[RMDB]
RNA sequence: GGGAACGACUCGAGUAGAGUCGAAAAUGGACUCUCCGUUGAUAGACCAACGAUCUCACUUCCUCACGGAGCAGGCGUGCUCCCUUGUCGACAAGCUGGCUGACACGGGAAUGUCUAGGGCAGAGGCUGCUUCUGCUAGAUUCGUCUAGCAGAAGCAAAAAGAAACAACAACAACAAC
Reactivity to DMS in 0.01 (KOAc 150mM, MgCl2 10mM, bicine 150mM(pH8.5), 24C), signal-to-noise 3, nucleotides 027 to 126: u000g010g010a100c070u000c010u000c060c010g050u000u000g000a110u010a050g010a130c090c060a050a130c100g010a100u010c010u010c050a080c100u000u000c020c070u000c080a080c220g010g000a010g040c090a060g000g010c110g040u000g010c070u000c020c010c050u000u000g020u000c040g010a070c090a080a120g000c060u000g010g030c030u000g000a060c060a070c100g000g010g010a090a070u000g000u000c050u000a090g030g000g000c040a050g000a130g010g000c170
Reactivity to 2A3 in 0.01 (KOAc 150mM, MgCl2 10mM, bicine 150mM(pH8.5), 24C), signal-to-noise 2, nucleotides 027 to 126: u110g030g020a080c000u010c010u000c050c000g040u030u040g060a110u070a110g100a090c050c010a040a030c060g070a100u050c030u020c040a060c040u050u060c000c020u010c000a060c110g010g000a010g000c010a010g030g070c040g070u070g010c010u100c000c000c090u030u080g050u020c020g040a050c030a060a050g100c050u070g030g010c050u030g020a000c010a030c070g040g010g050a000a100u080g010u000c010u050a050g030g010g010c050a000g030a050g100g020c060
About this RNA: Chemical mapping of a 177-nucleotide RNA with DMS and 2A3. Conditions: 150 mM KOAc, 10 mM MgCl2 and 150 mM bicine (pH 8.5), 24 C. Reactivities are rounded to 0.1 and cut off at 0 and 3. The 2A3 profile rests on 2,641 reads. The DMS profile rests on 2,493 reads.